Chemical mapping of a 207-nucleotide RNA with 2A3 and DMS. 2A3 is a SHAPE reagent: it acylates the 2'-hydroxyl of flexible nucleotides of all four kinds. The DMS profile rests on 6,049 reads. 2A3 adducts were read by reverse transcription with SuperScript II with manganese. It was measured as part of the RMDB library ARCHII. DMS adducts were read by reverse transcription with MarathonRT.
[RMDB]
RNA sequence: GGGAACGACUCGAGUAGAGUCGAAAAUAAAAAGCUUGGUGAGUAUAGCUAUGGGGGUACACCUAGUUACAUUCCGAACCUAGAAGUUAAGCCCAUAUACGCUGAUGGUACUUGGCUGGAAGUGGCCUGGGAGAGUAUGGAUUUGCCAAGACAGUAAGUGUAAAAUAUUGUUCGCAAUAUUUUACACAAAAGAAACAACAACAACAAC
Reactivity to 2A3 in 0.01 (KOAc 150mM, MgCl2 10mM, bicine 150mM(pH8.5), 24C), signal-to-noise 3, nucleotides 027 to 156: u110a000a110a020a020a000g030c010u040u020g020g000u030g050a040g010u070a080u130a190g010c020u010a020u030g030g000g010g010g030u080a020c040a030c050c000u030a030g010u100u110a010c010a010u180u110c060c000g000a010a010c000c010u010a040g000a180a010g110u030u040a050a020g020c000c010c010a020u020a010u010a030c070g000c030u040g010a030u040g060g000u000a010c000u040u040g000g010c000u040g030g000a080a030g060u080g050g020c010c030u010g020g040g010a100g000a000g030u000a030u080g030g030a010u010u030u020g010c000c000a030a020g040a030c020a010g100u220a280a010
Reactivity to DMS in 0.01 (KOAc 150mM, MgCl2 10mM, bicine 150mM(pH8.5), 24C), signal-to-noise 3, nucleotides 027 to 156: u000a070a110a140a140a150g030c030u000u000g010g080u010g010a090g020u000a080u000a080g020c060u000a030u000g000g020g020g020g020u010a070c060a060c040c000u010a020g000u010u000a050c030a150u000u010c090c120g010a080a090c140c030u010a080g010a100a090g020u010u000a060a160g010c060c000c010a080u000a070u000a060c080g020c060u020g000a090u000g010g020u000a060c040u000u000g000g050c040u000g010g010a100a100g010u000g000g020c030c010u000g020g010g010a130g000a110g020u000a090u000g010g000a130u000u000u000g000c040c000a020a090g030a080c040a110g010u010a040a210